The data come from the RNA Mapping Database (RMDB), library M2RFPK. Structure probing data (DMS and 2A3) for a 207-nucleotide construct. Reactivities are rounded to 0.1 and cut off at 0 and 3. For 2A3 the reverse transcriptase was SuperScript II with manganese.
RNA sequence: GGGAACGACUCGAGUAGAGUCGAAAAGCAACGCAAAGCCGCGGCAAGUGGAGUUAGCGAGAAGAGACUAGGCUUUGGUUUCUUCGAGUGAAGCGGUCACCAAUCAGGUGUGGUAGUUACCGUAAAAAUAACCGCUCUUUGUUCGCAAAGAGCGGAACUAAACUGUUGUGUUCGCACAACAGUUUAGAAAAGAAACAACAACAACAAC
Reactivity to DMS in 0.01 (KOAc 150mM, MgCl2 10mM, bicine 150mM(pH8.5), 24C), signal-to-noise 2, nucleotides 027 to 156: g000c000a040a060c000g000c000a070a080a120g020c030c020g010c030g010g020c050a050a130g030u010g020g000a120g010u000u000a280g040c000g000a300g000a080a030g010a040g000a010c000u000a080g050g020c140u000u000u000g020g030u000u000u000c000u020u000c000g010a300g000u000g000a080a180g020c010g040g020u000c030a090c020c010a060a100u010c090a030g000g060u010g010u010g010g010u000a060g020u000u000a100c030c010g010u020a010a110a050a050a070u030a090a160c000c000g010c020u000c010u000u000u000g010u010u000c300g010c030a010a010a020g020a020g020c020g010g010a000a050
Reactivity to 2A3 in 0.01 (KOAc 150mM, MgCl2 10mM, bicine 150mM(pH8.5), 24C), signal-to-noise 4, nucleotides 027 to 156: g020c010a020a030c060g000c080a080a060a040g020c030c030g020c010g050g030c070a070a050g020u070g050g050a090g020u150u130a020g030c040g010a040g020a050a000g020a000g010a000c010u030a030g100g190c030u170u100u100g010g000u030u010u000c000u010u010c000g010a010g010u060g020a080a010g000c010g010g010u010c010a010c020c000a030a150u160c050a040g000g090u070g030u060g110g040u050a060g030u060u060a040c010c020g030u080a090a060a010a020a020u110a080a040c000c000g020c000u000c010u010u000u010g040u040u110c180g010c120a000a000a000g000a000g000c000g000g000a010a000